[RMDB]
Structure probing data (DMS and 2A3) for a 177-nucleotide construct. Values are in units of 0.01, from 0 to 300, in steps of 10. Reactivities are given for positions 27 through 126. Conditions: 150 mM KOAc, 10 mM MgCl2 and 150 mM bicine (pH 8.5), 24 C.
RNA sequence: GGGAACGACUCGAGUAGAGUCGAAAAGAAUUUUAGAAAAGCAAGGCCAUCUAAGCAGCACCCGAAAUGCUGAGGGCUAAUUUGGGGUUUAGGAGCAACCUUUCCUGGAAAAAGUGGAAAGGAAAGACAUACCAUGAGUAUUCGUACUCAUGGUAUGAAAAGAAACAACAACAACAAC
Reactivity to DMS in 0.01 (KOAc 150mM, MgCl2 10mM, bicine 150mM(pH8.5), 24C), signal-to-noise 7, nucleotides 027 to 126: g010a100a080u030u020u020u040a070g010a060a050a100a100g010c140a090a100g020g010c020c030a080u020c040u020a100a060g010c030a030g000c080a110c010c030c060g010a060a090a100u010g010c020u010g000a070g020g010g010c040u010a040a100u010u020u000g010g000g000g010u000u010u000a070g010g020a080g010c110a090a130c010c000u010u000u000c000c010u000g000g010a140a090a050a110a110g030u010g000g010a010a010a010g010g010a020a050a050g010a230
Reactivity to 2A3 in 0.01 (KOAc 150mM, MgCl2 10mM, bicine 150mM(pH8.5), 24C), signal-to-noise 5, nucleotides 027 to 126: g040a060a120u090u150u140u170a090g040a040a130a020a000g050c080a060a070g060g000c000c030a050u080c060u110a080a000g010c000a000g040c020a080c020c030c030g030a060a050a040u110g000c020u030g010a050g010g030g000c020u050a050a130u030u050u070g030g010g010g000u020u020u060a060g050g050a050g020c020a020a080c000c000u010u000u000c000c000u020g100g040a110a140a020a030a030g190u090g020g000a010a000a010g010g000a040a030a000g030a000